[RMDB]
RNA sequence: GGGAACGACUCGAGUAGAGUCGAAAAGACGCCUGUGUGGCGAAGCGAGCAUGAGAUGGAGCCGCAAGAGAAGAUGAGAUAGAAGCGGCCCGAUAGGUUGCUCGCCAAAAGAUCCAUCUCACAGAGAAAUACUACGGGUAUUCGUACCCGUAGUAUUAAAAGAAACAACAACAACAAC
Reactivity to 2A3 in 0.01 (KOAc 150mM, MgCl2 10mM, bicine 150mM(pH8.5), 24C), signal-to-noise 7, nucleotides 027 to 126: g070a010c020g030c000c010u170g050u120g100u190g120g000c010g010a010a000g010c000g000a010g000c020a020u060g020a060g030a160u180g030g010a040g000c000c010g000c050a110a040g100a010g060a200a030g080a120u260g050a070g040a090u190a080g110a120a030g010c000g000g010c000c000c010g100a100u090a110g110g060u060u030g000c000u010c010g000c000c000a010a040a000a000g030a020u010c010c000a030u000c010u010c020a030c030a020g090a000g030a060
Reactivity to DMS in 0.01 (KOAc 150mM, MgCl2 10mM, bicine 150mM(pH8.5), 24C), signal-to-noise 6, nucleotides 027 to 126: g010a150c030g000c010c000u010g020u040g010u020g000g000c020g000a140a150g010c010g010a030g000c000a030u000g000a180g020a070u010g000g010a100g010c000c000g010c000a080a080g010a150g010a140a100g010a180u010g010a120g010a200u010a150g000a190a160g010c000g010g010c000c010c010g000a100u030a020g000g040u030u000g020c010u000c000g010c000c060a050a050a080a100g000a120u010c020c020a040u000c010u000c020a100c190a120g000a090g000a070